[RMDB]
RNA sequence: GGGAACGACUCGAGUAGAGUCGAAAAAUGGUGUCGACUAGCUAGCUAGGUACGAUCAGCUCAGUCGAUCGCUGCGCUAUACAUGGCUAGCGACGCACCAUGUGUCGUACCGUACCAGUACUGAGCGCCUCGUUUGCGAAUUCGUUCGCAAACGAGGAAAAGAAACAACAACAACAAC
Reactivity to 2A3 in 0.01 (KOAc 150mM, MgCl2 10mM, bicine 150mM(pH8.5), 24C), signal-to-noise 2, nucleotides 027 to 126: a000u050g020g030u040g090u200c030g000a300c090u080a030g010c000u000a000g030c000u010a030g000g100u030a030c060g020a120u090c090a010g030c000u000c010a030g100u120c040g080a070u110c040g000c070u050g010c050g010c050u050a020u020a160c060a070u080g000g000c020u000a010g000c000g010a010c000g000c000a010c000c000a020u030g130u060g040u040c040g010u000a020c000c010g010u050a080c000c020a040g030u000a000c010u090g070a030g040c040g060
Reactivity to DMS in 0.01 (KOAc 150mM, MgCl2 10mM, bicine 150mM(pH8.5), 24C), signal-to-noise 2, nucleotides 027 to 126: a030u000g000g000u000g000u010c000g030a070c180u020a190g000c020u000a030g000c040u000a020g000g020u000a050c170g010a050u000c160a140g000c010u000c060a060g020u000c110g020a020u010c190g010c060u010g000c170g020c060u010a120u010a030c140a070u010g000g020c000u000a000g020c000g020a060c090g030c020a000c010c020a010u010g010u000g020u010c060g000u000a070c000c020g030u020a140c020c040a200g010u020a020c030u000g000a030g010c070g020